Record summary
Chemical mapping of a 177-nucleotide RNA with DMS. The RNA was probed in 150 mM KOAc, 10 mM MgCl2 and 150 mM bicine (pH 8.5) at 24 C.
RNA sequence: GGGAACGACUCGAGUAGAGUCGAAAAGUGGCGUUCACCCGCGCGCUGGGCGGCGAGGGGCCGCGCCAUGGCGUGCGGGUGUUCGGCGUCAACCCGUCGCGCACCCGCACCGACCGCGUGCUGGGCAUAAUCCGAGUGGUUUCGACCACUCGGAUUAAAAAGAAACAACAACAACAAC
Reactivity to DMS in 0.01 (KOAc 150mM, MgCl2 10mM, bicine 150mM(pH8.5), 24C), signal-to-noise 1, nucleotides 027 to 126: g020u000g000g010c040g010u010u010c000a030c030c030c010g040c000g030c010g010c010u000g000g020g030c020g010g050c040g020a150g010g000g000g000c030c010g000c000g020c010c040a130u010g010g020c000g070u000g000c010g020g000g010u000g010u020u000c040g020g010c000g000u000c040a070a150c060c060c020g000u020c110g010c130g030c100a110c000c010c030g000c010a010c030c020g030a160c130c150g020c100g020u000g000c000u000g020g010g000c140a050